[RMDB]
RNA sequence: GGGAACGACUCGAGUAGAGUCGAAAACAACACAUAUAAUGAUGCUCCAGCUGAAAAUGAAGUGAGUUACAUGAUUAGUAACAAUAAUGAGGUGUCGUUUCAUAUUGCAGUAGAUGACAAGAAAGCGAUUCAAGGUAUUCCGUUGGAACGUAAUGCAGGGUUAUAGAAUAUUCGUAUUCUAUAACCCAAAAGAAACAACAACAACAAC
Reactivity to DMS in 0.01 (KOAc 150mM, MgCl2 10mM, bicine 150mM(pH8.5), 24C), signal-to-noise 4, nucleotides 027 to 156: c020a110a100c050a060c040a070u000a100u010a070a080u000g020a220u000g030c020u000c030c020a040g000c050u000g000a070a070a110a130u000g000a040a060g020u010g020a230g000u000u010a020c040a070u000g020a110u010u000a120g030u000a060a050c040a070a160u000a070a100u010g020a100g030g030u000g020u010c010g040u000u000u000c070a080u000a150u000u000g010c040a080g030u000a100g020a100u000g010a110c020a060a100g010a050a040a130g020c070g010a090u000u000c060a050a090g020g020u010a110u000u000c050c020g000u000u000g020g000a060a080c070g000u000a070a080u000g030c080a190
Reactivity to 2A3 in 0.01 (KOAc 150mM, MgCl2 10mM, bicine 150mM(pH8.5), 24C), signal-to-noise 6, nucleotides 027 to 156: c060a030a020c040a000c050a050u110a010u080a210a190u160g090a020u080g020c020u010c030c010a040g000c020u050g030a060a090a090a110u110g030a100a030g030u060g070a040g000u020u030a020c020a050u120g040a120u280u140a040g020u030a050a000c020a020a050u180a090a060u170g060a050g090g040u040g000u020c010g000u010u020u020c060a070u070a080u130u110g020c010a000g000u100a050g030a110u090g020a060c020a020a040g080a110a060a010g040c020g020a010u060u050c060a060a000g060g000u070a130u110u040c030c010g020u020u020g020g050a050a020c030g040u130a090a040u220g090c090a080